RNA sequence: GGGAACGACUCGAGUAGAGUCGAAAAUGUUUCAACAUUAGAACCACAAGUGACAUGGGGAACUAAUCCUGAAAUGGGUGUUAAUUUCAGUGAACCAUUCCCUGAAAUCAAUGAUAUCAACGAUCAACUCUCUACUCCCGUUCGCGGGAGUAGAGAGAAAAGAAACAACAACAACAAC
Reactivity to 2A3 in 0.01 (KOAc 150mM, MgCl2 10mM, bicine 150mM(pH8.5), 24C), signal-to-noise 1, nucleotides 027 to 126: u060g010u000u230u010c070a110a030c000a020u020u080a050g040a100a020c010c000a010c010a070a050g110u020g040a010c040a230u210g010g010g000g000a020a000c000u010a010a050u030c010c010u000g040a020a000a050u130g000g060g020u190g080u280u050a060a020u020u000u000c020a000g010u000g220a060a060c060c000a110u020u000c010c000c010u020g040a050a000a000u090c060a010a050u090g030a000u040a040u170c020a110a000c050g040a020u030c010a020a100
Reactivity to DMS in 0.01 (KOAc 150mM, MgCl2 10mM, bicine 150mM(pH8.5), 24C), signal-to-noise 1, nucleotides 027 to 126: u000g030u000u010u000c170a030a100c130a130u000u000a070g000a020a190c010c000a130c130a080a090g000u000g050a140c090a060u000g000g000g000g000a000a090c010u000a200a150u000c200c030u000g010a060a030a030u000g000g000g000u000g040u000u000a110a060u000u000u000c000a050g000u000g010a100a070c300c300a160u000u020c000c000c000u000g000a090a100a070u000c140a000a150u030g000a070u000a020u020c190a000a170c080g000a040u000c150a010a190

Structure probing data (2A3 and DMS) for a 177-nucleotide construct.
Conditions: 150 mM KOAc, 10 mM MgCl2 and 150 mM bicine (pH 8.5), 24 C.
For DMS the reverse transcriptase was MarathonRT.
For DMS, 513 sequencing reads were counted.
High DMS reactivity at an A or C suggests that its Watson-Crick edge is free.
Source: RMDB library OK2TST, as collected in RNAgym.
For 2A3 the reverse transcriptase was SuperScript II with manganese.